[RMDB]
RNA sequence: GGGAACGACUCGAGUAGAGUCGAAAACUCAGAAUUAUUAUACACAUAACAUGCAAUUUGCAAUAAAAGUGCUAAGUAGUUUUGAAGUAAAAGCACUAAGGGAUGUUAUCAUUGCUGUCAUUGAUAGCCAUAUCCGUAUAUUCGUAUACGGAUAUGGAAAAGAAACAACAACAACAAC
Reactivity to 2A3 in 0.01 (KOAc 150mM, MgCl2 10mM, bicine 150mM(pH8.5), 24C), signal-to-noise 7, nucleotides 027 to 126: c010u000c000a000g050a040a020u070u040a020u090u080a110u110a080c010a000c000a010u160a080a020c020a020u060g020c020a080a240u130u120u240g000c010a040a000u060a110a080a020a010g000u010g000c030u030a050a020g020u020a050g010u050u050u090u090g080a100a010g030u120a020a090a050a000g010c020a020c070u030a040a040g100g030g020a050u080g050u090u060a070u130c040a030u020u090g050c060u060g090u140c020a080u030u140g040a050u080a040g030
Reactivity to DMS in 0.01 (KOAc 150mM, MgCl2 10mM, bicine 150mM(pH8.5), 24C), signal-to-noise 8, nucleotides 027 to 126: c030u000c010a030g010a030a020u000u000a020u000u000a150u010a130c020a030c020a030u010a110a090c180a050u000g010c010a130a160u010u010u010g020c010a020a030u000a150a100a120a040g010u000g000c070u010a120a170g010u000a020g000u000u000u000u000g010a060a080g010u000a040a060a080a070g010c070a050c060u010a050a070g010g010g010a100u000g010u000u000a030u000c070a060u000u000g010c080u000g010u000c030a070u000u000g010a060u000a060g000